The data come from the RNA Mapping Database (RMDB), library OK1LIB.
An RNA of 177 nucleotides, treated with 2A3 and DMS and read out base by base.
The reactions ran in a buffer of 150 mM KOAc, 10 mM MgCl2 and 150 mM bicine (pH 8.5), at 24 C.
For DMS, 2,750 sequencing reads were counted.
Reactivities are given for positions 27 through 126.
2A3 adducts were read by reverse transcription with SuperScript II with manganese.
RNA sequence: GGGAACGACUCGAGUAGAGUCGAAAAGAAUGCUUUAUCGGCAUAUAACGCAUCGUUUUUCAGCAUCUGCCCAUACUCUUUGACAAACGCGCCGCAGCCGCUGGCGGUUUGCAAAAUUGCCUCGGCAGGUAGCAUAUCGGUUCGCCGAUAUGCUACCAAAAGAAACAACAACAACAAC
Reactivity to 2A3 in 0.01 (KOAc 150mM, MgCl2 10mM, bicine 150mM(pH8.5), 24C), signal-to-noise 7, nucleotides 027 to 126: g080a050a030u060g010c020u060u070u060a070u110c050g030g000c030a020u090a020u040a150a030c070g020c040a040u060c140g060u020u020u020u070u170c050a060g020c010a070u030c020u090g040c010c010c000a020u130a110c060u060c050u070u110u070g050a100c030a030a070a010c110g020c020g000c220c000g010c030a080g090c030c140g020c090u060g000g000c000g000g010u010u020u040g010c000a010a000a000a120u080u050g010c010c010u040c010g040g020c030a030
Reactivity to DMS in 0.01 (KOAc 150mM, MgCl2 10mM, bicine 150mM(pH8.5), 24C), signal-to-noise 2, nucleotides 027 to 126: g030a050a080u000g000c000u010u010u040a120u030c050g000g000c040a020u040a120u030a060a160c080g000c030a030u010c030g020u000u060u000u000u080c000a080g030c120a070u000c020u010g010c010c010c010a070u000a110c080u020c030u010u020u010g000a050c040a030a050a010c060g070c030g000c010c010g030c080a140g010c140c110g000c130u040g040g010c010g050g010u000u000u040g050c100a010a030a020a100u000u010g020c050c020u000c080g010g000c100a070